[RMDB]
RNA sequence: GGGAACGACUCGAGUAGAGUCGAAAACGCCGAAGGGAAAAGUUGGUAGCCACGCGUAAGCAGAUCCUGGACCGUACCACAAAGAAGAGAUGGAGCACGCUAUGCUCCAGACUUGCGGUGUCAGACCACCAUGACACUUAUUCGUAAGUGUCAUGGUAAAAGAAACAACAACAACAAC
Reactivity to 2A3 in 0.01 (KOAc 150mM, MgCl2 10mM, bicine 150mM(pH8.5), 24C), signal-to-noise 9, nucleotides 027 to 126: c040g020c010c020g060a080a080g070g020g020a030a070a050a100g110u120u090g050g010u060a040g030c020c010a040c050g060c020g050u060a050a040g030c030a020g030a080u080c010c020u030g010g020a020c020c030g010u050a040c000c020a050c070a080a220a040g140a080a020g030a040g010a050u020g020g000a000g000c010a010c110g130c100u130a110u300g000c000u000c000c000a000g010a030c000u020u060g020c010g030g000u020g070u060c020a010g030a080c010c000
Reactivity to DMS in 0.01 (KOAc 150mM, MgCl2 10mM, bicine 150mM(pH8.5), 24C), signal-to-noise 9, nucleotides 027 to 126: c070g010c030c020g010a090a060g000g000g020a050a070a080a090g010u020u000g010g020u010a080g010c040c040a050c090g020c090g020u020a090a090g010c060a110g010a060u010c060c040u000g000g000a050c030c030g020u000a080c040c060a090c120a060a070a100g020a080a080g010a070g000a290u010g010g010a020g010c010a080c300g020c210u040a130u010g010c010u000c000c010a000g000a070c020u000u000g010c040g010g010u010g000u000c030a030g000a170c100c060